[RMDB]
RNA sequence: GGGAACGACUCGAGUAGAGUCGAAAAAUAAAGAAUGGGUUUGCCAAAAUCAUCAUAAAACAAAGAGAUGCUGUGAUGUAGUCAUCUCCAAACAGCUUUUCCCUGAUGCAGGAUAGUGCCAAUGCUAUGAUUACAGUUACUUCGGUAACUGUAAUCAAAAAGAAACAACAACAACAAC
Reactivity to 2A3 in 0.01 (KOAc 150mM, MgCl2 10mM, bicine 150mM(pH8.5), 24C), signal-to-noise 2, nucleotides 027 to 126: a040u150a010a040a030g030a060a130u120g150g010g000u050u040u070g040c000c020a090a070a070a060u080c010a020u010c040a050u130a280a080a040a030c080a020a170a000g020a000g010a000u030g000c010u000g010u030g030a070u050g020u030a000g060u100c010a040u000c020u010c020c010a020a060a060c010a030g080c000u020u030u000u040c000c000c000u050g030a080u120g010c040a000g020g060a030u040a080g090u080g050c050c020a060a070u150g000c020u080a030
Reactivity to DMS in 0.01 (KOAc 150mM, MgCl2 10mM, bicine 150mM(pH8.5), 24C), signal-to-noise 4, nucleotides 027 to 126: a050u000a060a070a030g000a140a100u010g010g000g000u000u000u000g020c130c100a090a080a130a090u020c010a030u010c010a190u010a020a050a020a030c210a070a090a150g000a040g010a030u000g000c020u000g020u000g010a030u020g000u000a020g010u010c020a010u010c000u000c010c070a040a020a040c060a040g000c030u010u000u000u000c010c020c000u000g000a070u000g010c040a030g000g000a100u000a060g020u000g000c010c070a070a080u000g000c060u000a120